This 177-nucleotide RNA was probed chemically with 2A3 and DMS. Values cover nucleotides 27 to 126. The reactions ran in a buffer of 150 mM KOAc, 10 mM MgCl2 and 150 mM bicine (pH 8.5), at 24 C. For DMS, 1,263 sequencing reads were counted.
[RMDB]
RNA sequence: GGGAACGACUCGAGUAGAGUCGAAAAAAAGUUAGCGUACUAGAGUCGCCGUGAGUACGCUAUGGUUCCGUGAGACUCUACUCGAGCGUAUCACGGAACCCACGUAGAUACCGUACGUGCUAUAAAACACACGUCAGGAAUUCGUUCCUGACGUGUGAAAAGAAACAACAACAACAAC
Reactivity to 2A3 in 0.01 (KOAc 150mM, MgCl2 10mM, bicine 150mM(pH8.5), 24C), signal-to-noise 2, nucleotides 027 to 126: a010a030a010g090u020u020a010g000c000g000u000a000c000u020a020g120a080g160u090c060g030c110c010g160u140g050a000g010u000a000c010g000c000u000a010u040g030g000u070u050c050c030g020u030g010a080g000a010c000u000c020u010a010c010u010c020g000a000g010c020g000u020a040u010c020a000c000g030g000a030a050c000c010c010a010c000g000u020a030g010a160u090a170c080c090g090u010a010c070g040u000g020c050u120a090u180a230a090a070a000
Reactivity to DMS in 0.01 (KOAc 150mM, MgCl2 10mM, bicine 150mM(pH8.5), 24C), signal-to-noise 1, nucleotides 027 to 126: a050a030a050g010u000u000a000g030c000g020u000a000c000u010a080g010a080g010u010c080g000c050c050g040u000g000a030g030u000a000c010g020c000u000a000u000g000g000u000u000c050c060g050u000g000a230g010a020c000u000c000u000a000c010u000c030g000a030g000c030g020u000a060u010c030a080c060g000g000a030a040c030c090c000a040c000g010u020a020g000a080u010a030c200c130g010u000a030c000g000u000g000c130u000a070u020a070a040a070a120
The data come from the RNA Mapping Database (RMDB), library M2PK90.